[RMDB]
RNA sequence: GGGAACGACUCGAGUAGAGUCGAAAAGUUGAAGACAAUAUCCAGAUGUGUCUUCUGGUCUGAGACCUUAGUGGAUGAAACAAGAUCAGCUUGUAGCAACAUUAGUACAGCUAUAACCAAAUCAAUAUAGUGUGUAACGGUUCGCCGUUACACACUAAAAAGAAACAACAACAACAAC
Reactivity to DMS in 0.01 (KOAc 150mM, MgCl2 10mM, bicine 150mM(pH8.5), 24C), signal-to-noise 2, nucleotides 027 to 126: g020u000u010g010a010a050g020a140c070a080a100u000a080u010c050c060a110g000a040u020g000u010g000u000c000u000u020c080u000g010g020u020c060u020g000a040g030a040c020c060u000u010a040g030u010g010g020a070u000g000a070a000a080c120a040a090g020a050u020c040a010g020c060u000u010g010u000a020g000c050a040a060c070a140u010u020a050g010u020a050c120a100g020c010u000a020u020a100a170c060c020a050a060a080u020c160a080a090u010a170
Reactivity to 2A3 in 0.01 (KOAc 150mM, MgCl2 10mM, bicine 150mM(pH8.5), 24C), signal-to-noise 1, nucleotides 027 to 126: g040u080u040g000a000a010g020a020c010a020a060u040a050u100c040c000a040g000a180u130g120u030g000u000c000u100u000c000u080g150g000u000c070u120g030a020g010a090c000c050u080u040a170g090u090g040g050a040u060g000a000a060a130c070a090a000g000a170u070c000a010g050c020u000u030g010u020a010g000c050a000a080c030a080u120u180a050g050u090a020c020a060g000c000u050a050u070a070a000c000c000a060a010a070u140c090a150a050u170a010